Structure probing data (DMS and 2A3) for a 177-nucleotide construct. It was measured as part of the RMDB library OK2TST. The 2A3 profile rests on 1,114 reads. Reactivities are rounded to 0.1 and cut off at 0 and 3. 2A3 adducts were read by reverse transcription with SuperScript II with manganese. The reactions ran in a buffer of 150 mM KOAc, 10 mM MgCl2 and 150 mM bicine (pH 8.5), at 24 C. DMS adducts were read by reverse transcription with MarathonRT.
[RMDB]
RNA sequence: GGGAACGACUCGAGUAGAGUCGAAAACAUGAGCCCGGAGUUUGAGGCUUGGUGCAAGGAGCAGAUGGUGAGGCUGCAGGGGCAGGACGACCUGACGCUGGUGCGCUUCCUGCUGAGCUGCUCAUCCCCCGAGGUUACGAUUCGUCGUAACCUCGGGAAAAGAAACAACAACAACAAC
Reactivity to DMS in 0.01 (KOAc 150mM, MgCl2 10mM, bicine 150mM(pH8.5), 24C), signal-to-noise 2, nucleotides 027 to 126: c140a100u000g000a010g000c020c030c010g060g000a050g000u000u010u000g040a120g020g020c070u000u000g020g010u000g030c060a100a120g000g000a060g020c030a070g040a100u000g020g000u000g020a080g000g000c040u000g020c030a040g000g010g010g020c000a030g000g000a080c100g000a060c010c000u000g000a170c260g010c160u000g020g030u020g030c030g010c190u010u000c030c000u000g000c050u000g000a220g000c020u000g000c030u000c020a040u000c050c080
Reactivity to 2A3 in 0.01 (KOAc 150mM, MgCl2 10mM, bicine 150mM(pH8.5), 24C), signal-to-noise 1, nucleotides 027 to 126: c000a080u100g050a000g030c000c000c000g000g030a170g130u130u130u100g060a080g020g020c050u010u120g060g000u080g090c090a090a080g050g000a050g080c040a050g030a130u170g050g070u080g010a040g150g040c030u030g000c010a000g050g000g070g060c000a000g000g030a010c030g010a040c000c050u020g060a120c090g060c260u000g040g000u110g040c030g050c020u040u030c000c000u000g000c060u030g000a000g010c000u000g030c020u010c050a030u050c000c000